[RMDB]
RNA sequence: GGGAACGACUCGAGUAGAGUCGAAAAUUCUAAUGCUUUUACAAAACCUGUCCUAGUGGCAUCUAAUGCUGGAUGUUCAACCAGUUGAGUUAUACCAAUUUUUUUAACUUCUUUACCUUUAGAAUUAGGUAUAAUCAGGAUUCGUCCUGAUUAUACCAAAAGAAACAACAACAACAAC
Reactivity to 2A3 in 0.01 (KOAc 150mM, MgCl2 10mM, bicine 150mM(pH8.5), 24C), signal-to-noise 9, nucleotides 027 to 126: u050u020c030u070a070a050u100g070c060u080u140u090u120a090c070a040a160a040a030c010c020u030g050u050c010c010u060a040g070u090g080g010c010a040u010c040u110a130a100u190g030c050u030g010g030a090u090g080u150u160c030a080a070c010c000a030g010u030u090g060a040g020u080u070a070u070a150c030c040a060a070u080u030u020u030u000u070u140a070a060c020u060u030c010u060u140u140a140c020c030u100u120u080a060g050a160a070u110u050a090
Reactivity to DMS in 0.01 (KOAc 150mM, MgCl2 10mM, bicine 150mM(pH8.5), 24C), signal-to-noise 3, nucleotides 027 to 126: u010u000c040u000a050a090u020g000c100u050u010u000u010a130c150a100a110a070a110c050c000u020g040u010c020c010u040a120g040u010g010g000c020a050u000c080u020a040a010u010g000c070u020g000g000a040u030g000u010u020c140a060a080c050c010a020g000u010u000g000a130g020u000u010a040u010a090c060c080a070a000u020u000u030u030u000u000u030a070a070c050u000u000c020u000u000u010a080c100c030u020u010u050a010g020a020a070u000u020a040
Structure probing data (2A3 and DMS) for a 177-nucleotide construct. Conditions: 150 mM KOAc, 10 mM MgCl2 and 150 mM bicine (pH 8.5), 24 C. Reactivities are rounded to 0.1 and cut off at 0 and 3. Reactivities are given for positions 27 through 126.